[RMDB]
An RNA of 177 nucleotides, treated with 2A3 and DMS and read out base by base. Values cover nucleotides 27 to 126. For DMS, 6,325 sequencing reads were counted. 2A3 is a SHAPE reagent: it acylates the 2'-hydroxyl of flexible nucleotides of all four kinds. It was measured as part of the RMDB library TTRDES. The 2A3 profile rests on 17,030 reads.
RNA sequence: GGGAACGACUCGAGUAGAGUCGAAAAGAUAUGGAGAACCCAGACAUGCCUAAGUGUUCGGAAACGAACAUGAUGGGCAACAGCUGGAGUUCUCCUAAGUCAAAACACUGCCGUUCGCGGCAGUGAACGACUUAUAUCAGUUCGCUGAUAUAAGUCGAAAAGAAACAACAACAACAAC
Reactivity to 2A3 in 0.01 (KOAc 150mM, MgCl2 10mM, bicine 150mM(pH8.5), 24C), signal-to-noise 6, nucleotides 027 to 126: g000a010u030a020u070g000g000a010g000a000a000c010c010c010a010g010a020c140a230u300g000c010c000u030a090a030g010u000g010u010u010c000g000g000a020a010a010c000g000a000a000c010a000u050g010a120u300g000g020g020c030a030a040c100a020g020c000u010g000g030a300g060u000u000c000u000c000c000u000a010a000g000u010c020a000a000a030a080c010a000c000u010g000c020c000g050u090u090c300g020c010g160g000c000a000g000u010g000a020a020
Reactivity to DMS in 0.01 (KOAc 150mM, MgCl2 10mM, bicine 150mM(pH8.5), 24C), signal-to-noise 5, nucleotides 027 to 126: g000a020u000a160u010g000g000a020g000a010a020c010c010c000a020g010a040c110a300u010g020c000c000u010a190a300g020u000g010u000u000c010g000g010a050a040a100c000g000a010a010c000a000u010g010a110u010g000g000g010c000a050a040c300a100g010c000u000g010g010a180g010u000u000c000u000c000c000u000a000a050g010u000c010a110a130a100a250c020a010c000u000g010c000c000g030u000u000c260g020c020g030g000c000a000g010u000g000a050a140